This 207-nucleotide RNA was probed chemically with 2A3 and DMS. DMS adducts were read by reverse transcription with MarathonRT. Source: RMDB library M2RFPK, as collected in RNAgym. For 2A3 the reverse transcriptase was SuperScript II with manganese. The reactions ran in a buffer of 150 mM KOAc, 10 mM MgCl2 and 150 mM bicine (pH 8.5), at 24 C. For DMS, 3,776 sequencing reads were counted. The 2A3 profile rests on 2,088 reads.
[RMDB]
RNA sequence: GGGAACGACUCGAGUAGAGUCGAAAACAGAGCUAAUGAGCCACAUUCCUACCCAAGGUGAAAGCUCCUUCUCUCGCAAUGUGUAACUCAUGAUUCUCAUGACCCCUGGUUGGAGAGAUCCGGACUAUAGACUAGAGGGUGUUCGCACCCUCUAGAAGAAAUGAGUAGAGUUCGCUCUACUCAUUUCAAAAGAAACAACAACAACAAC
Reactivity to 2A3 in 0.01 (KOAc 150mM, MgCl2 10mM, bicine 150mM(pH8.5), 24C), signal-to-noise 3, nucleotides 027 to 156: c060a010g040a000g020c020u090a110a050u100g040a060g010c050c000a030c010a030u100u040c020c010u040a080c030c010c030a050a030g040g000u050g040a170a050a040g060c070u040c000c010u050u040c070u010c000u030c050g110c140a030a030u040g060u040g030u120a080a040c020u000c000a030u010g030a140u300u000c100u020c030a070u080g060a110c000c000c000c070u080g030g020u070u070g010g010a030g000a000g000a050u020c030c040g020g030a020c010u040a050u130a290g060a060c000u000a000g000a000g000g030g000u020g020u010u030c080g040c040a000c010c000c000u000c000u000a000g000a000a000
Reactivity to DMS in 0.01 (KOAc 150mM, MgCl2 10mM, bicine 150mM(pH8.5), 24C), signal-to-noise 2, nucleotides 027 to 156: c090a110g000a030g010c070u000a140a100u010g010a060g030c020c020a050c020a110u000u010c030c010u000a110c040c040c000a100a120g000g020u000g010a070a120a090g040c050u000c020c010u000u010c020u000c020u000c070g000c060a060a050u010g020u000g030u010a050a060c040u000c010a030u000g010a200u000u020c100u000c010a090u000g010a220c000c000c010c020u000g010g020u000u000g010g000a120g020a130g000a160u010c040c020g000g030a130c030u000a100u000a150g010a170c020u000a000g000a040g020g010g010u010g010u010u010c240g040c000a030c010c000c010u010c000u000a000g020a040a140